[RMDB]
RNA sequence: GGGAACGACUCGAGUAGAGUCGAAAACGGUUAUGCCCUUGAUUCACACGACAGCUCAACACGUUCCUAAAUUGAUCAAUUGUGACUACAGCAUUCGCAGUAAGUAGUGCUUUGCUGAACGUGAGCGACGUCUUUCCCCAUUCGUGGGGAAAGACGUAAAAGAAACAACAACAACAAC
Reactivity to 2A3 in 0.01 (KOAc 150mM, MgCl2 10mM, bicine 150mM(pH8.5), 24C), signal-to-noise 1, nucleotides 027 to 126: c040g050g030u190u100a140u260g030c000c000c000u030u120g170a180u220u080c150a010c070a020c090g120a020c040a020g040c000u000c000a030a100c020a050c060g000u000u030c000c010u090a000a060a210u160u180g010a110u050c060a010a140u140u030g100u040g050a050c000u070a010c030a000g000c010a000u120u000c020g010c000a000g070u180a200a020g050u080a070g070u040g000c020u020u010u010g000c010u010g000a030a000c020g000u010g150a030g010c040g040
Reactivity to DMS in 0.01 (KOAc 150mM, MgCl2 10mM, bicine 150mM(pH8.5), 24C), signal-to-noise 1, nucleotides 027 to 126: c130g000g020u010u000a090u000g020c000c000c010u000u000g060a090u020u000c080a080c060a220c110g000a090c010a060g020c030u000c000a090a070c220a200c060g040u000u040c040c040u000a120a140a120u020u040g000a130u000c150a060a120u000u000g000u000g000a120c040u000a220c030a070g000c010a070u040u000c300g000c000a080g000u000a150a180g020u000a000g000u010g000c040u000u000u010g010c150u010g000a070a040c070g000u030g000a070g000c110g060

Structure probing data (2A3 and DMS) for a 177-nucleotide construct. DMS adducts were read by reverse transcription with MarathonRT. It was measured as part of the RMDB library OK2TST. The DMS profile rests on 688 reads. Conditions: 150 mM KOAc, 10 mM MgCl2 and 150 mM bicine (pH 8.5), 24 C.